[RMDB]
RNA sequence: GGGAACGACUCGAGUAGAGUCGAAAAGGCAUUCGUUAACCCUCUUCUGGCGCAAACUGCUGUUUGCUCUGGAUGAAUCAUGGUCCUUUGGCGACGCCAGGCUCCGGGAGAGCAAAGCACCGUGUCACGGUGACAGUCGAUUCGUCGACUGUCACCGAAAAGAAACAACAACAACAAC
Reactivity to 2A3 in 0.01 (KOAc 150mM, MgCl2 10mM, bicine 150mM(pH8.5), 24C), signal-to-noise 2, nucleotides 027 to 126: g030g010c030a000u080u090c080g040u100u060a100a100c000c000c000u030c000u010u000c000u010g020g000c000g000c020a040a060a070c010u240g090c050u110g090u050u030u120g010c020u000c040u000g000g010a010u020g070a040a120u150c060a070u110g090g040u010c000c000u120u050u110g080g000c060g040a030c070g000c050c020a030g050g030c040u020c040c040g060g040g010a110g010a010g010c020a090a030a000g010c020a020c010c050g020u030g020u040c050a040
Reactivity to DMS in 0.01 (KOAc 150mM, MgCl2 10mM, bicine 150mM(pH8.5), 24C), signal-to-noise 2, nucleotides 027 to 126: g010g000c040a100u010u010c110g020u010u000a070a130c040c030c010u000c040u000u010c000u000g000g030c070g010c010a000a040a100c030u010g000c160u010g010u000u000u010g000c000u000c030u000g010g030a020u010g010a110a070u010c140a110u010g000g000u000c070c020u000u000u020g030g020c030g030a070c130g000c030c010a020g020g010c000u010c060c070g020g040g010a120g000a050g030c060a060a050a130g020c080a090c040c050g010u010g020u010c110a150
About this RNA: The record gives the reactivity of an RNA of 177 nucleotides to 2A3 and DMS. The data come from the RNA Mapping Database (RMDB), library OK2TST. Reactivities are given for positions 27 through 126. For 2A3 the reverse transcriptase was SuperScript II with manganese. The reactions ran in a buffer of 150 mM KOAc, 10 mM MgCl2 and 150 mM bicine (pH 8.5), at 24 C.